RNA sequence: GGGAACGACUCGAGUAGAGUCGAAAAUAAUAUUACGUUGAGCGCCUUGUUCAUCAAUGCUAUAAUUAGUUACAUAAUAAAUUGAACAUCUAAAUAUACCAAAUCCCCUCACUAUUGCCCUAGUGAGUACACCGUAGUGGUUCGCCACUACGGUGUAAAAAGAAACAACAACAACAAC
Reactivity to DMS in 0.01 (KOAc 150mM, MgCl2 10mM, bicine 150mM(pH8.5), 24C), signal-to-noise 1, nucleotides 027 to 126: u120a020a190u040a070u000u000a140c050g040u000u020g020a080g010c140g000c020c000u000u010g000u000u000c000a120u000c050a030a020u030g000c010u000a070u010a000a110u000u000a000g000u000u040a090c060a200u000a090a170u050a110a050a160u030u000g000a100a100c130a030u000c100u000a130a020a040u000a040u020a110c270c060a060a140a040u000c010c000c000c000u000c000a000c000u000a000u000u010g000c070c000c000u000a000g000u050g000a000g000
Reactivity to 2A3 in 0.01 (KOAc 150mM, MgCl2 10mM, bicine 150mM(pH8.5), 24C), signal-to-noise 2, nucleotides 027 to 126: u180a000a000u070a010u130u130a090c070g000u030u040g090a030g020c020g040c000c080u110u010g040u000u000c000a060u020c060a070a100u110g000c030u060a000u020a160a140u290u080a000g030u030u100a050c070a040u280a210a120u150a060a120a030u080u050g000a040a000c000a000u040c010u090a030a080a040u140a020u000a070c070c000a150a030a060u100c000c010c000c000u000c000a020c000u030a010u020u190g020c010c000c000u020a010g000u000g010a000g030